[RMDB]
RNA sequence: GGGAACGACUCGAGUAGAGUCGAAAAACAAGGUUUUGUUCUCGAGUAACGAGGAUGGAUUGGACUCCCUUCCGCGGUGACACUCACAGAAGCCUUUGCAGCCUCGCAAGAGGUCUGGCGCGACAGUAAAGAAUGCCUGAUGCAAGUCAGUUCGCUGCCAUGAAAUGUUGUUCGCAACAUUUCAUGGAAAAGAAACAACAACAACAAC
Reactivity to DMS in 0.01 (KOAc 150mM, MgCl2 10mM, bicine 150mM(pH8.5), 24C), signal-to-noise 2, nucleotides 027 to 156: a080c040a070a060g010g010u000u000u000u000g020u000u000c030u000c050g030a190g050u000a070a080c020g020a030g040g010a040u000g000g000a120u000u020g020g020a120c070u000c100c000c010u000u000c000c000g040c000g030g000u020g010a110c110a040c030u000c020a110c070a140g020a080a090g030c030c010u000u000u000g020c050a060g000c010c000u010c010g000c280a090a180g000a040g000g030u000c000u000g020g040c040g020c050g030a070c030a110g000u000a080a050a130g010a090a070u000g010c010c000u020g010a100u000g000c070a060a100g000u010c020a080g010u000u000c060g010c020u000g010
Reactivity to 2A3 in 0.01 (KOAc 150mM, MgCl2 10mM, bicine 150mM(pH8.5), 24C), signal-to-noise 3, nucleotides 027 to 156: a000c050a050a040g050g000u060u020u070u070g090u120u050c050u030c050g030a080g070u110a170a050c030g010a030g020g010a010u040g020g020a020u040u130g080g050a050c060u040c000c010c000u070u030c060c020g020c020g030g020u040g030a040c030a040c100u020c020a040c020a050g080a080a010g020c010c000u060u040u120g040c020a010g030c000c010u020c010g030c020a040a050g000a000g020g020u000c000u030g020g000c030g000c020g060a040c020a050g020u110a020a060a090g060a080a040u120g020c010c010u040g020a040u040g030c020a010a060g030u050c040a010g010u030u060c040g020c040u040g040

Chemical mapping of a 207-nucleotide RNA with DMS and 2A3. DMS adducts were read by reverse transcription with MarathonRT. 2A3 adducts were read by reverse transcription with SuperScript II with manganese. It was measured as part of the RMDB library ARCHII.